[RMDB]
RNA sequence: GGGAACGACUCGAGUAGAGUCGAAAACAGUCCAACGCUUCACUUAGCCAUUUUACCUCACCCCCACUGGUGUUCGCCGACCGUUGACUAUUCUCUACAAACCACAAAGACAUUCGAACACUAUACCCGAUACGUGACCAUUCGUGGUCACGUAUCGAAAAGAAACAACAACAACAAC
Reactivity to 2A3 in 0.01 (KOAc 150mM, MgCl2 10mM, bicine 150mM(pH8.5), 24C), signal-to-noise 5, nucleotides 027 to 126: c040a020g060u050c010c020a030a020c070g000c020u090u060c060a020c040u050u070a030g040c020c010a080u050u050u030u130a110c020c010u040c030a060c000c000c010c000c010a030c050u050g040g000u040g040u050u040c020g040c020c010g040a040c020c000g010u010u070g010a010c010u040a090u100u020c040u000c000u060a040c070a050a140a040c030c020a040c040a050a120a010g070a030c010a050u050u070c030g050a040a000c010a000c020u030a040u080a130c010c010
Reactivity to DMS in 0.01 (KOAc 150mM, MgCl2 10mM, bicine 150mM(pH8.5), 24C), signal-to-noise 2, nucleotides 027 to 126: c300a110g010u040c000c000a090a090c000g000c080u000u000c020a060c020u010u000a110g000c000c020a050u040u010u010u010a060c030c010u000c060a180c010c010c010c000c040a120c040u000g030g000u000g000u000u000c020g000c100c000g010a070c060c050g010u000u000g000a040c080u000a100u000u000c020u000c030u010a000c080a010a090a110c080c000a000c090a040a020a040g020a100c000a060u000u010c000g010a090a020c090a060c040u020a070u100a060c040c070

An RNA of 177 nucleotides, treated with 2A3 and DMS and read out base by base. For DMS, 1,904 sequencing reads were counted. The reactions ran in a buffer of 150 mM KOAc, 10 mM MgCl2 and 150 mM bicine (pH 8.5), at 24 C. DMS adducts were read by reverse transcription with MarathonRT. The data come from the RNA Mapping Database (RMDB), library OK1LIB.